Structure probing data (DMS) for a 177-nucleotide construct.
In probing experiments dimethyl sulfate is read out at A N1 and C N3, which are open when not base-paired.
Values cover nucleotides 27 to 126.
The RNA was probed in 150 mM KOAc, 10 mM MgCl2 and 150 mM bicine (pH 8.5) at 24 C.
It was measured as part of the RMDB library TTRINS.
[RMDB]
RNA sequence: GGGAACGACUCGAGUAGAGUCGAAAAGAUAUGGAUCCUUUCUUUCGCUCAGAUCAGGACGAGCUCUGUGUCGGAAACGACAUUGAGCGAUGAGUCCUGAUCUGAGCGAAAGAUGGGAUCCUAAGUCCAUGAAUACUGCGUUCGCGCAGUAUUCAUGAAAAGAAACAACAACAACAAC
Reactivity to DMS in 0.01 (KOAc 150mM, MgCl2 10mM, bicine 150mM(pH8.5), 24C), signal-to-noise 1, nucleotides 027 to 126: g000a060u000a300u020g010g000a000u000c000c000u000u010u000c000u000u000u000c000g010c010u000c020a010g000a050u000c020a000g000g020a030c000g000a240g000c000u000c000u000g020u000g000u000c000g000g000a120a100a300c010g000a000c000a020u000u000g000a020g000c000g000a060u020g040a230g030u000c000c000u010g000a000u000c000u010g000a000g000c000g000a000a000a010g010a010u000g000g000g010a010u000c000c000u000a010a080g010u000c040